[RMDB]
RNA sequence: GGGAACGACUCGAGUAGAGUCGAAAAUGUCUUCUGAGCGGUAUCGGCAGUGAUGAAACGGUAAUCAUAUUUGCCCGGAUCUGGCUCGUUAGCGUCAAGACUGCUGCCGUAAUAAGUCCACCAUUCCGAGUUAAACACGGAGCCGCCAAGCGCGAUCUAACAUAGAUCCAUUCGUGGAUCUAUGUUAAAAAGAAACAACAACAACAAC
Reactivity to 2A3 in 0.01 (KOAc 150mM, MgCl2 10mM, bicine 150mM(pH8.5), 24C), signal-to-noise 6, nucleotides 027 to 156: u130g040u000c020u070u020c040u100g050a040g030c010g010g010u060a040u110c010g020g000c010a020g010u050g110a200u070g020a130a050a030c020g000g040u070a050a030u120c100a080u090a180u240u080u080g010c000c020c030g040g010a070u030c030u050g030g000c020u000c040g080u060u110a050g020c010g030u040c040a090a050g030a040c040u030g000c000u010g000c000c000g000u010a020a030u050a080a010g030u000c020c020a030c030c020a070u080u000c010c010g010a010g090u080u200a120a110a010c060a010c040g010g010a010g010c000c020g000c010c000a040a010g030c050g010c030g090a040u050c020
Reactivity to DMS in 0.01 (KOAc 150mM, MgCl2 10mM, bicine 150mM(pH8.5), 24C), signal-to-noise 4, nucleotides 027 to 156: u000g010u010c020u000u010c080u010g000a080g040c010g020g010u010a080u000c010g020g030c010a070g020u000g000a100u000g000a180a080a080c050g020g010u000a050a070u000c070a080u000a130u000u000u010g010c020c010c030g020g020a130u000c030u010g010g020c030u010c100g000u000u000a060g010c030g010u000c050a070a220g010a060c050u000g000c000u000g000c030c010g020u000a060a090u000a060a100g000u000c030c030a090c070c030a120u000u000c030c010g000a120g030u000u000a080a060a160c090a080c030g020g010a110g000c030c000g020c020c010a040a150g020c060g010c060g010a150u000c040